Description
Structure probing data (2A3 and DMS) for a 177-nucleotide construct. In probing experiments dimethyl sulfate is read out at A N1 and C N3, which are open when not base-paired. The RNA was probed in 150 mM KOAc, 10 mM MgCl2 and 150 mM bicine (pH 8.5) at 24 C. For DMS the reverse transcriptase was MarathonRT.
[RMDB]
RNA sequence: GGGAACGACUCGAGUAGAGUCGAAAAUGCUUGGACCCAUCGAGAAGACCGAAAAAACAGGAUCCACUGAGCCUAAGAUGACUGGGGUUGUAGAAGCAAAUCAAAUAGAAUCAAAGGUAAGUGAAUCAUUAUUAGGCUACUUCGGUAGCCUAAUAAUAAAAGAAACAACAACAACAAC
Reactivity to 2A3 in 0.01 (KOAc 150mM, MgCl2 10mM, bicine 150mM(pH8.5), 24C), signal-to-noise 1, nucleotides 027 to 126: u070g000c030u040u110g040g000a060c000c030c000a020u050c010g040a050g030a100a050g030a090c030c050g000a060a020a030a030a060a060c050a050g080g050a010u010c010c000a040c030u020g010a030g090c000c000u030a060a040g010a030u030g030a090c020u010g010g010g010g010u020u020g040u000a160g030a140a000g010c030a040a070a020u000c000a040a070a100u150a100g060a030a020u000c020a010a000a050g000g000u030a000a010g030u000g030a000a010u010c000
Reactivity to DMS in 0.01 (KOAc 150mM, MgCl2 10mM, bicine 150mM(pH8.5), 24C), signal-to-noise 3, nucleotides 027 to 126: u020g020c100u000u010g020g010a140c020c030c030a090u010c030g000a060g010a080a100g010a100c060c040g000a020a110a050a080a120a090c160a110g000g010a060u010c010c010a020c010u010g000a130g010c000c020u000a030a270g020a030u010g000a070c060u000g000g010g010g010u000u000g010u010a050g030a120a100g000c070a040a030a020u000c050a030a070a100u020a060g000a220a010u000c020a040a150a060g010g030u000a200a070g000u010g010a080a040u000c050
Values are in units of 0.01, from 0 to 300, in steps of 10.
Source: RMDB library OK2TST, as collected in RNAgym.
For DMS, 1,951 sequencing reads were counted.
Reactivities are given for positions 27 through 126.